[RMDB]
RNA sequence: GGGAACGACUCGAGUAGAGUCGAAAAGUGUUCACACGUACGUGUGAUCGAGAUCUCGAGUUCUCUCGUUCACACGUGUGAACACGUGUGUGUGAACGUGAUCGUGUUCGAGAACGAACGUUCGAUCGAGAUCACGAACUCUCGAGUACGUGUUCACCGUGGGGCCUUACUUCGGUAAGGCCCCACGAAAAGAAACAACAACAACAAC
Reactivity to 2A3 in 0.01 (KOAc 150mM, MgCl2 10mM, bicine 150mM(pH8.5), 24C), signal-to-noise 1, nucleotides 027 to 156: g060u010g000u010u000c000a000c000a010c010g100u250a000c100g010u010g000u010g060a020u000c000g000a000g000a000u060c110u020c140g040a140g110u300u100c070u000c000u000c130g000u010u010c040a040c010a000c030g120u000g000u000g020a040a000c000a000c000g000u060g000u040g000u000g000u000g030a060a000c010g000u050g010a020u040c020g080u030g050u110u010c000g000a000g040a070a110c120g050a130a010c060g010u020u000c000g030a020u070c030g070a040g010a080u020c030a040c010g000a070a010c020u000c000u000c080g020a020g070u030a060c000g030u050g000u090u050c000a000c040
This 207-nucleotide RNA was probed chemically with 2A3. 2A3 adducts were read by reverse transcription with SuperScript II with manganese. The RNA was probed in 150 mM KOAc, 10 mM MgCl2 and 150 mM bicine (pH 8.5) at 24 C. The data come from the RNA Mapping Database (RMDB), library OK3TST.